[RMDB]
RNA sequence: GGGAACGACUCGAGUAGAGUCGAAAAGAAAGCAUGCUAAGGCUAUCUGGACAUAGUUAACGCGCCGCGUACGGAAACCAUCCUGCAUGCGAAAGGAUGGGAAGUCAACUGCUUGCGCAAGGAUGGGAAAGCAUGCGUGCAGCUAGGCGAGCACUCCAGUUAUUAGACCUUUCGAGGUCUAAUAACUAAAAGAAACAACAACAACAAC
Reactivity to DMS in 0.01 (KOAc 150mM, MgCl2 10mM, bicine 150mM(pH8.5), 24C), signal-to-noise 3, nucleotides 027 to 156: g020a110a080a150g030c020a020u000g010c020u010a060a170g040g020c030u000a030u000c010u000g010g000a130c070a040u000a040g030u000u000a080a100c070g000c030g030c030c050g000c120g050u010a080c050g020g000a170a120a180c000c000a030u000c010c010u010g010c020a180u000g010c100g010a050a160a010g000g010a020u000g000g000g000a050a060g010u000c040a050a070c060u000g000c030u000u000g020c060g010c030a120a120g000g010a090u000g000g020g010a150a120a090g010c020a070u010g010c010g000u010g020c000a060g020c030u010a070g030g010c010g000a080g020c030a070c000u000c020c070
Reactivity to 2A3 in 0.01 (KOAc 150mM, MgCl2 10mM, bicine 150mM(pH8.5), 24C), signal-to-noise 5, nucleotides 027 to 156: g110a020a070a000g010c010a000u030g000c010u080a090a110g130g030c010u020a020u020c040u040g060g010a040c050a100u170a080g110u120u150a160a060c060g010c020g010c040c020g010c020g030u050a020c080g040g070a100a060a020c000c000a000u000c000c000u030g040c040a120u200g080c050g090a100a070a010g020g000a010u030g010g000g040a030a020g070u060c040a050a020c040u100g000c010u100u190g000c010g000c030a050a040g030g000a020u040g020g000g040a030a080a010g010c010a010u010g000c010g010u020g010c010a010g010c010u100a050g080g000c020g040a010g000c010a010c030u020c030c020